Structure probing data (DMS and 2A3) for a 170-nucleotide construct. For DMS, 25,017 sequencing reads were counted. For DMS the reverse transcriptase was MarathonRT. The RNA was probed in 150 mM KOAc, 10 mM MgCl2 and 150 mM bicine (pH 8.5) at 24 C.

[RMDB]
RNA sequence: GGGAACGACUCGAGUAGAGUCGAAAAAUCAUUUCUAACGCUAGGAAUGGUUGUAUACCUCUUAGUGUCAUCCCACUGUGUGCUUCAAAUAAACUUCGCGUUGUAAUUCCUGACUUCACCGUCUGGACAGCCAUCCAGUUCGCUGGAUGGAAAAGAAACAACAACAACAAC
Reactivity to DMS in 0.01 (KOAc 150mM, MgCl2 10mM, bicine 150mM(pH8.5), 24C), signal-to-noise 7, nucleotides 027 to 129: a010u020c030a010u010u020u010c030u010a080a220c280g020c250u020a060g010g000a020a020u000g030g000u020u020g000u050a050u040a100c070c030u050c080u000u000a060g020u010g030u020c090a050u000c040c020c010a150c140u000g000u060g030u000g050c030u000u000c100a080a090a120u070a090a070a090c090u040u010c020g050c240g070u000u000g040u000a010a010u030u010c060c000u000g030a090c000u000u000c270a000c110c090g020u050c030u040g000g010a080c240a090g040
Reactivity to 2A3 in 0.01 (KOAc 150mM, MgCl2 10mM, bicine 150mM(pH8.5), 24C), signal-to-noise 9, nucleotides 027 to 129: a000u000c010a010u010u030u000c020u020a100a090c180g090c200u030a000g000g010a040a050u090g000g040u010u010g060u090a100u090a030c000c000u030c040u040u060a040g010u000g010u030c020a060u030c010c040c000a050c070u070g060u010g020u030g100c020u080u110c060a040a100a260u190a090a170a060c050u130u110c150g020c060g100u020u040g060u060a060a110u040u010c010c000u000g050a060c000u070u010c090a040c070c020g020u020c020u000g010g020a010c020a010g010